[RMDB]
RNA sequence: GGGAACGACUCGAGUAGAGUCGAAAAGGAACUAUGUUCAGGCAUGAAGCCUCCACGUGCGUGCGAAAGCACCCGGAAACGGCUGAGCAUAGUUCCGAGCUGAAGGAGGCACGGCUCAAAAUAAAAAGAUAGGUCCGUGAUUCGUCACGGACCUAUCAAAAGAAACAACAACAACAAC
Reactivity to 2A3 in 0.01 (KOAc 150mM, MgCl2 10mM, bicine 150mM(pH8.5), 24C), signal-to-noise 1, nucleotides 027 to 126: g010g000a000a000c000u010a010u010g010u030u000c000a020g030g000c000a000u020g050a080a020g000c000c000u010c000c010a040c000g030u000g000c010g010u000g000c010g040a120a010a020g000c000a000c000c020c000g020g010a030a070a010c050g000g000c000u000g000a000g020c000a010u000a010g000u000u000c000c000g010a020g000c000u000g040a140a050g010g020a000g000g010c010a010c020g000g010c000u010c000a020a050a040a010u300a010a070a020a000a000